[RMDB]
RNA sequence: GGGAACGACUCGAGUAGAGUCGAAAAGGAAAAGCUUGUGUUAGUGGCUGAUAAAGCGCUGUUUCAUGCCAAACAUGAGCAACGUGGCACCAUUCAUAUGUUUAGUAGUACCACUUGGCAUGAAUAAGUCAGGGGAUUUAUUCGUAAAUCCCCUGACAAAAGAAACAACAACAACAAC
Reactivity to 2A3 in 0.01 (KOAc 150mM, MgCl2 10mM, bicine 150mM(pH8.5), 24C), signal-to-noise 1, nucleotides 027 to 126: g020g010a020a060a040a040g010c010u010u040g020u080g050u090u030a030g020u060g300g010c000u040g050a110u180a100a050a000g060c000g000c070u010g040u050u050u020c000a020u110g000c060c000a000a040a080c000a010u020g060a010g050c090a080a070c050g040u020g000g000c010a000c040c000a020u150u090c020a030u120a030u300g070u070u040u060a100g000u020a020g020u000a020c020c000a040c110u000u070g010g070c000a000u060g020a000a050u260a110a000
Reactivity to DMS in 0.01 (KOAc 150mM, MgCl2 10mM, bicine 150mM(pH8.5), 24C), signal-to-noise 1, nucleotides 027 to 126: g020g040a110a060a070a160g010c030u000u000g020u020g000u000u000a040g050u010g030g020c000u010g000a080u020a130a120a140g010c030g010c020u010g030u000u000u000c010a010u000g010c000c090a040a030a140c020a020u000g000a020g000c010a030a050c160g070u000g000g040c040a070c020c040a040u000u000c080a120u000a110u000g020u010u010u000a070g010u000a080g010u000a130c030c040a070c070u020u000g010g020c040a000u000g000a070a050u000a030a110